[RMDB]
RNA sequence: GGGAACGACUCGAGUAGAGUCGAAAAACCAUCCUAUUCGUAGGAUGGUGCACCAUUGCCGAUUGUAUAUAAUACCGCAGGCGGAAAAGCGGUUCAAAAAAGGAACUUGUCAGUUCGCUGACAAGAAUCACAAUGUCAUGUUCGCAUGACAUUGUGAAAAAGAAACAACAACAACAAC
Reactivity to DMS in 0.01 (KOAc 150mM, MgCl2 10mM, bicine 150mM(pH8.5), 24C), signal-to-noise 3, nucleotides 027 to 126: a030c000c000a000u000c000c000u000a010u000u010c190g030u000a000g010g010a020u010g000g000u000g000c140a160c020c000a130u000u000g030c020c030g020a190u010u010g010u010a050u010a050u000a080a080u000a050c000c070g030c040a070g010g010c040g010g000a060a050a090a100g010c050g010g040u000u020c050a020a030a050a080a060a070g010g020a110a180c000u000u000g010u000c000a000g020u000u010c190g030c010u000g000a020c000a000a000g010a100a100